[RMDB]
RNA sequence: GGGAACGACUCGAGUAGAGUCGAAAAUAUUACAUCUUCGGAUGUAAUAACUGGAGGUGGCUGGCUUGUUGCUAGUGGCGCAACUGUUGCCAUGACUGCGCAAUCGCUCUGAAUUCGUUCAGAGCAAAGUUGGUUUAUUUUUCGAAAUAAACCAACUAAAAGAAACAACAACAACAAC
Reactivity to 2A3 in 0.01 (KOAc 150mM, MgCl2 10mM, bicine 150mM(pH8.5), 24C), signal-to-noise 4, nucleotides 027 to 126: u040a000u000u010a000c000a020u000c010u030u040c190g130g010a010u020g000u010a010a010u010a010a020c050u070g120g070a060g090g020u060g030g000c060u020g010g000c020u090u120g020u040u060g050c010u050a050g110u070g140g020c060g000c020a030a090c040u090g120u270u090g000c010c000a040u060g070a100c010u060g010c060g000c050a050a080u110c090g000c000u000c000u000g010a010a010u040u060c180g020u040u000c020a000g000a000g000c000a020a000
Reactivity to DMS in 0.01 (KOAc 150mM, MgCl2 10mM, bicine 150mM(pH8.5), 24C), signal-to-noise 7, nucleotides 027 to 126: u000a010u000u000a000c010a000u000c000u000u010c190g020g010a010u000g000u000a000a010u000a020a150c090u000g000g010a090g010g030u000g010g010c050u000g000g010c060u000u000g000u000u000g010c020u000a140g030u010g010g010c100g000c020a050a060c070u000g010u010u000g010c030c020a040u010g000a110c070u000g010c050g010c130a100a090u010c160g020c000u000c000u000g000a020a040u000u010c180g010u000u000c000a010g000a010g010c000a010a010